[RMDB]
RNA sequence: GGGAACGACUCGAGUAGAGUCGAAAACUAGGGGGUAUUCCGGUGUGGGAUACUUAGUAAUAUGCAACGCUAAUUGCAUAAGAUUGUAGGACGGAAUUGACAGUCUUGGUUUUUCAAACCUGAAACUUGUGGUAGUACGCGUUCGCGCGUACUACAAGAGGUAGAUUAGUUUCGACUAAUCUACCUCAAAAGAAACAACAACAACAAC
Reactivity to DMS in 0.01 (KOAc 150mM, MgCl2 10mM, bicine 150mM(pH8.5), 24C), signal-to-noise 2, nucleotides 027 to 156: c040u010a060g000g010g020g000g050u060a000u010u000c040c010g020g040u000g060u000g030g020g000a090u000a040c040u000u000a070g020u010a130a150u000a060u010g000c000a010a040c040g010c180u010a120a160u000u000g010c000a030u000a040a090g000a130u000u000g010u000a070g000g000a120c060g000g000a120a300u020u000g000a110c070a010g010u020c010u000u000g020g000u000u000u010u010u030c150a080a030a110c050c020u020g000a070a080a050c070u020u000g010u000g000g020u010a020g000u000a000c000g020c020g020u000u000c300g010c060g050c000g010u000a010c000u000a000c010a040a100
Reactivity to 2A3 in 0.01 (KOAc 150mM, MgCl2 10mM, bicine 150mM(pH8.5), 24C), signal-to-noise 2, nucleotides 027 to 156: c030u070a030g070g010g000g000g000u050a030u040u040c080c030g150g070u190g020u180g080g020g010a010u000a060c000u050u050a000g020u040a080a060u060a010u040g030c000a040a020c040g000c170u110a100a010u110u020g000c000a010u010a020a040g100a110u110u090g030u080a040g000g070a020c090g010g050a050a100u080u100g020a050c010a020g020u020c000u080u090g050g030u000u000u000u000u180c070a060a030a000c030c000u120g060a070a090a100c040u050u100g050u060g180g000u000a010g010u000a000c000g000c000g020u000u070c110g020c000g000c000g090u000a020c000u000a010c000a000a010